[RMDB]
RNA sequence: GGGAACGACUCGAGUAGAGUCGAAAACUCGAACGGUUCGCCGUUCGAGAAAAGCGCGUCAGCGCUACGAUGCAAGCGCAAGCGCGUGCAUCGUAAAUGUAAAAACUUGUGUGUUCGCACACAAGAACUUGACAUUGACGUUCGCGUCAAUGUCAAGAAAAGAAACAACAACAACAAC
Reactivity to DMS in 0.01 (KOAc 150mM, MgCl2 10mM, bicine 150mM(pH8.5), 24C), signal-to-noise 1, nucleotides 027 to 126: c010u010c000g000a020a000c000g010g000u000u000c260g030c010c000g010u000u030c000g010a010g010a070a090a080a190g000c010g000c010g040u020c240a150g000c010g030c010u010a000c020g030a010u000g000c010a060a000g000c010g060c090a150a240g010c010g020c010g000u000g000c010a000u000c000g000u000a000a010a000u010g030u000a040a030a030a080a130c010u000u010g010u010g030u000g010u000u000c180g030c000a020c010a000c000a020a020g000a070a090
Reactivity to 2A3 in 0.01 (KOAc 150mM, MgCl2 10mM, bicine 150mM(pH8.5), 24C), signal-to-noise 1, nucleotides 027 to 126: c000u010c000g010a000a000c000g020g060u050u080c170g080c060c020g010u000u000c000g010a000g000a010a050a010a000g020c020g010c010g160u190c060a050g000c000g020c030u000a000c000g000a000u010g070c030a000a050g000c000g000c180a200a050g140c050g030c000g030u000g000c010a020u000c010g010u060a030a050a000u120g040u060a030a050a030a020a050c020u010u000g030u000g010u010g010u040u040c220g030c030a010c000a010c000a020a000g010a010a010